[RMDB]
The record gives the reactivity of an RNA of 177 nucleotides to DMS and 2A3.
It was measured as part of the RMDB libraries RFM100 and RFMREP.
2A3 is a SHAPE reagent: it acylates the 2'-hydroxyl of flexible nucleotides of all four kinds.

RNA sequence: GGGAACGACUCGAGUAGAGUCGAAAAACGCUGAUGUACGCAUCAGCGAGCCAAUGAUGAGACCGGCACUAACUGAGUUGUGAUGAGCACUCGGUUGGCUGAGACACAUGCACUUACGAGUGCAUGACUUUUGAUAUUACUUCGGUAAUAUCAAAAGAAAAGAAACAACAACAACAAC
Reactivity to DMS in 0.01 (KOAc 150mM, MgCl2 10mM, bicine 150mM(pH8.5), 24C), signal-to-noise 9, nucleotides 027 to 126: a120c020g010c000u000g000a010u000g010u020a110c220g020c010a010u000c000a000g010c000g000a050g000c020c030a110a090u030g010a130u020g010a120g000a190c090c030g000g000c030a090c060u020a010a010c010u000g000a020g000u020u010g020u000g000a130u050g000a300g000c010a010c000u000c000g010g010u000u000g000g000c020u000g010a090g010a160c140a190c010a010u000g000c000a000c000u000u010a110c180g010a040g010u000g000c000a000u000g000a090
Reactivity to 2A3 in 0.01 (KOAc 150mM, MgCl2 10mM, bicine 150mM(pH8.5), 24C), signal-to-noise 9, nucleotides 027 to 126: a000c010g000c000u000g000a000u000g020u070a020c260g000c130a000u000c000a000g000c000g000a010g010c000c010a110a140u230g110a100u120g020a050g070a100c040c000g010g010c030a030c170u100a020a000c000u010g010a000g140u300u040g030u130g040a080u120g010a010g000c000a000c000u000c000g000g000u000u000g010g000c030u020g040a020g050a060c040a000c000a040u000g000c000a000c010u040u050a060c250g110a010g010u000g000c000a000u010g010a020
The RNA was probed in 150 mM KOAc, 10 mM MgCl2 and 150 mM bicine (pH 8.5) at 24 C.